[RMDB]
The record gives the reactivity of an RNA of 207 nucleotides to 2A3.
For 2A3, 773 sequencing reads were counted.
Reactivities are given for positions 27 through 156.
It was measured as part of the RMDB library RNAMAK.
RNA sequence: GGGAACGACUCGAGUAGAGUCGAAAACGCUGGGAUGUGAGUCGACGAUGGUCGAGCUGAAGCGCGCACGGCCCAGACAGCCAUUCGUCGCGACACAUCCUGUGCUGAAGCGCGCACGGCAACCGAAAGGUGCGACUGCCAAUUUUCGAAUUGGCAAGCUUAAUUGGCUCUUCGGAGCCAAUUAAGCAAAAGAAACAACAACAACAAC
Reactivity to 2A3 in 0.01 (KOAc 150mM, MgCl2 10mM, bicine 150mM(pH8.5), 24C), signal-to-noise 1, nucleotides 027 to 156: c000g000c000u010g000g000g000a010u000g060u020g000a150g190u300c060g030a000c000g000a010u010g000g090u090c150g020a020g000c020u030g010a070a060g030c020g000c000g050c060a090c070g140g020c000c030c000a050g000a070c040a000g000c000c000a050u200u230c030g000u000c020g000c040g160a010c000a000c000a020u000c000c000u010g000u040g020c050u060g100a070a030g020c040g030c000g010c020a000c000g040g020c030a060a140c020c080g060a110a000a000g090g000u020g020c010g140a080c070u030g000c000c010a010a030u000u000u000u110c100g110a020a010u000u000g000g000c030a010a040